[RMDB]
RNA sequence: GGGAACGACUCGAGUAGAGUCGAAAAACUAGUAUGUACAGGGGUGAGUUGACCUGUCAUCUCGACUGCUGACCAUCAACUCACCGGUCAGCUGGAUGAUGUCCACAGAGUACGACAUCAGUACUCAGUGUAUUGUGUAGUUCGCUGCACGAUACACAAAAGAAACAACAACAACAAC
Reactivity to 2A3 in 0.01 (KOAc 150mM, MgCl2 10mM, bicine 150mM(pH8.5), 24C), signal-to-noise 9, nucleotides 027 to 126: a000c020u020a010g050u060a130u220g080u090a020c010a030g180g030g020g030u050g030a040g020u010u020g040a040c020c060u030g010u000c000a030u010c030u030c010g170a100c070u070g010c020u010g020a010c010c010a040u060c010a020a050c020u020c040a030c010c020g000g000u000c000a000g000c010u020g020g020a080u090g010a030u070g070u040c020c000a080c050a080g020a010g020u020a010c040g080a030c080a170u120c040a050g010u010a010c000u000c030a010
Reactivity to DMS in 0.01 (KOAc 150mM, MgCl2 10mM, bicine 150mM(pH8.5), 24C), signal-to-noise 9, nucleotides 027 to 126: a080c050u000a030g010u020a030u010g010u040a020c020a050g010g010g000g020u010g000a050g020u000u000g010a040c090c080u000g000u000c020a020u000c040u010c100g010a120c100u010g000c050u010g000a020c010c300a240u010c070a040a050c090u010c060a050c100c050g000g000u000c010a030g000c000u010g000g000a090u010g000a060u020g000u000c010c030a100c200a080g000a030g010u000a010c030g000a130c180a110u040c130a100g010u000a010c010u000c010a140
Structure probing data (2A3 and DMS) for a 177-nucleotide construct. For 2A3 the reverse transcriptase was SuperScript II with manganese. Values cover nucleotides 27 to 126. The DMS profile rests on 97,353 reads. The 2A3 profile rests on 164,946 reads.